[RMDB]
RNA sequence: GGGAACGACUCGAGUAGAGUCGAAAAGUAGAGAAGGAUCCACCAUGCCAGCAAAGCUGGGGUGCAUCAUAUGCCUCGGGUAUGCAGGGGAUAGGCCGUCCAUGGUAGUCCCAGUGACAGGAAGCCACCUUAGUCCCGCUUUCGAGCGGGACUAAGGAAAAGAAACAACAACAACAAC
Reactivity to DMS in 0.01 (KOAc 150mM, MgCl2 10mM, bicine 150mM(pH8.5), 24C), signal-to-noise 1, nucleotides 027 to 126: g000u070a090g020a080g030a230a090g000g000a040u000c120c020a020c020c000a230u000g080c020c000a040g000c000a000a160a200g040c000u000g000g010g020g190u000g010c060a070u090c190a080u090a170u000g020c060c050u000c020g000g000g000u000a050u000g020c030a120g020g000g000g050a020u000a100g000g000c030c020g000u060c040c000a040u010g000g000u000a090g000u000c000c110c080a090g000u010g000a130c070a030g010g000a110a170g000c000c100a110
Reactivity to 2A3 in 0.01 (KOAc 150mM, MgCl2 10mM, bicine 150mM(pH8.5), 24C), signal-to-noise 1, nucleotides 027 to 126: g170u160a030g000a040g020a070a200g150g020a030u030c060c000a030c050c080a020u060g030c000c020a000g010c050a260a200a000g040c030u020g030g000g000g070u060g000c030a000u000c010a000u160a060u200g010c020c000u020c030g020g000g000u130a030u090g010c020a060g000g000g000g160a020u040a080g040g010c050c000g010u020c000c000a000u040g000g000u030a020g030u010c000c000c000a000g030u060g010a070c020a000g060g060a100a020g020c000c020a070